This 207-nucleotide RNA was probed chemically with 2A3. Conditions: 150 mM KOAc, 10 mM MgCl2 and 150 mM bicine (pH 8.5), 24 C.

RNA sequence: GGGAACGACUCGAGUAGAGUCGAAAAAGAUGCUCACUUUUGACGAGAAAGCGUUUACACUUGCUAAUGUUAGUAGUUUUGGUGACUACAACCUUAGCAGUGUUAUACCUAGCUUGCCUACAAGUGGUAGUAGAGUAGCCGGUCGCAGUGCCAUAGACCAUGGCCGUUUAUUCGUAAACGGCCAUGGAAAAGAAACAACAACAACAAC
Reactivity to 2A3 in 0.01 (KOAc 150mM, MgCl2 10mM, bicine 150mM(pH8.5), 24C), signal-to-noise 2, nucleotides 027 to 156: a000g080a040u100g010c010u040c040a040c050u010u090u070u090g080a060c010g000a010g030a110a080a010g030c040g030u000u000u060a010c020a010c010u140u200g000c000u010a010a000u010g010u010u030a070g000u030a060g010u040u000u090u300g300g040u280g040a010c000u010a000c000a000a000c000c030u000u000a000g000c000a000g000u000g000u020u090a020u000a020c000c010u000a010g020c020u000u030g010c010c010u060a080c070a080a040g010u040g060g000u050a020g010u010a010g050a030g050u070a050g030c060c070g020g050u000c060g010c110a080g030u030g010c050c000a050u070a030g040a030
Source: RMDB library OK3TST, as collected in RNAgym.